[RMDB]
Conditions: 150 mM KOAc, 10 mM MgCl2 and 150 mM bicine (pH 8.5), 24 C. Chemical mapping of a 207-nucleotide RNA with DMS and 2A3. The 2A3 profile rests on 4,046 reads. Values cover nucleotides 27 to 156. DMS adducts were read by reverse transcription with MarathonRT. It was measured as part of the RMDB library OK3TST.
RNA sequence: GGGAACGACUCGAGUAGAGUCGAAAAGCGGCUGACCCUGGCUGUGAACACAGGGCUGCUUGACUCCAAAGCCUGAGCUGGUUUGCAGCGAGGCUCAUGGUUUCUGUGCCACUGUUUGAGCCUCUGGUCGAGCCCCUUGGCUCAGUGGGGGGCCCAGAUUCAUCUAGAGAUUCGUCUCUAGAUGAAUAAAAGAAACAACAACAACAAC
Reactivity to DMS in 0.01 (KOAc 150mM, MgCl2 10mM, bicine 150mM(pH8.5), 24C), signal-to-noise 2, nucleotides 027 to 156: g020c050g000g030c000u010g000a090c010c000c030u000g010g000c050u000g010u000g000a060a090c080a190c070a100g010g020g020c030u000g030c050u000u020g010a090c030u000c050c040a100a120a110g030c040c020u000g010a120g020c040u000g020g030u000u000u000g020c030a110g000c050g000a040g000g010c000u000c010a020u000g000g010u000u000u000c140u010g020u010g000c030c030a080c050u000g010u000u010u000g010a050g020c020c000u000c010u010g010g020u000c030g010a050g000c010c040c050c020u010u000g010g010c010u000c050a080g030u000g000g000g000g000g010g030c010c000c020a030g010
Reactivity to 2A3 in 0.01 (KOAc 150mM, MgCl2 10mM, bicine 150mM(pH8.5), 24C), signal-to-noise 5, nucleotides 027 to 156: g040c100g020g000c010u040g080a140c010c020c010u030g100g000c030u050g080u060g160a220a010c090a010c040a070g020g020g000c010u010g000c000u060u100g030a060c010u010c070c020a080a070a040g060c010c050u130g050a060g050c060u060g030g070u130u140u160g060c020a010g030c010g020a010g000g000c000u000c010a020u040g020g020u030u120u130c130u190g170u240g030c020c020a080c080u120g070u240u090u070g020a010g020c010c000u010c050u060g020g020u060c040g010a010g010c020c010c010c010u030u110g020g000c000u010c030a040g030u090g020g010g000g000g010g000c020c000c000a040g010